An RNA of 177 nucleotides, treated with DMS and 2A3 and read out base by base. For 2A3 the reverse transcriptase was SuperScript II with manganese.

RNA sequence: GGGAACGACUCGAGUAGAGUCGAAAAUAUGCCUAUCGUAUGCGCGGCGAGGCGCAUAUGUGGUCGCCGGAUGCGGUGGCAAAGCUGCAACAUGCGGUGCGCACGUCCAAUCCAGACACGUUCACCACAUUUAGGGAGCUUUCGAGCUCCCUAAAUGAAAAGAAACAACAACAACAAC
Reactivity to DMS in 0.01 (KOAc 150mM, MgCl2 10mM, bicine 150mM(pH8.5), 24C), signal-to-noise 3, nucleotides 027 to 126: u010a080u000g000c010c010u010a090u000c040g010u000a000u000g020c040g020c000g040g020c120g010a110g000g000c030g020c030a050u000a020u010g040u000g010g020u000c030g000c070c010g020g000a050u010g040c200g000g010u010g020g000c040a040a080a140g010c030u000g000c060a070a090c140a060u010g010c050g000g000u010g020c110g010c040a060c100g000u010c010c060a100a090u020c110c030a090g010a020c060a250c050g000u010u000c030a110c000c000a200
Reactivity to 2A3 in 0.01 (KOAc 150mM, MgCl2 10mM, bicine 150mM(pH8.5), 24C), signal-to-noise 2, nucleotides 027 to 126: u240a070u080g020c030c030u080a050u150c020g020u030a000u040g110c180g020c010g050g080c080g050a060g100g080c030g040c010a020u020a100u250g040u000g030g050u010c010g000c000c020g030g010a050u060g040c030g000g030u030g050g010c050a100a080a020g030c020u090g020c010a050a040c020a160u160g020c050g020g070u030g030c070g000c060a060c050g020u000c020c040a030a020u040c020c000a000g030a010c040a010c080g000u030u040c040a070c140c000a040
Reactivities are rounded to 0.1 and cut off at 0 and 3.
Conditions: 150 mM KOAc, 10 mM MgCl2 and 150 mM bicine (pH 8.5), 24 C.